[RMDB]
RNA sequence: GGGAACGACUCGAGUAGAGUCGAAAAGCUUAGCAGUUCGCUGCUAAGCGACGUUGACGGCCCUCACCGUUGACAAAUCCCAAUGAGGACAGGUGACAGACAGAUAUUAAGCGUUCGCGCUUAAUAACGUCUGGACAUCUUUCGAGAUGUCCAGACGAAAAGAAACAACAACAACAAC
Reactivity to DMS in 0.01 (KOAc 150mM, MgCl2 10mM, bicine 150mM(pH8.5), 24C), signal-to-noise 1, nucleotides 027 to 126: g000c000u000u000a000g020c010a010g000u000u010c290g040c000u000g000c000u000a000a000g040c000g010a000c170g010u000u000g000a040c030g010g030c090c030c050u000c050a300c040c000g030u020u000g000a000c000a110a180a150u000c010c000c000a120a000u010g000a080g000g020a210c150a030g000g030u000g000a250c120a040g010a020c020a120g010a130u000a000u000u010a000a000g020c000g030u000u010c210g030c000g010c000u000u020a000a000u010a010a160
This 177-nucleotide RNA was probed chemically with DMS. The DMS profile rests on 769 reads. Conditions: 150 mM KOAc, 10 mM MgCl2 and 150 mM bicine (pH 8.5), 24 C. DMS adducts were read by reverse transcription with MarathonRT. Values cover nucleotides 27 to 126.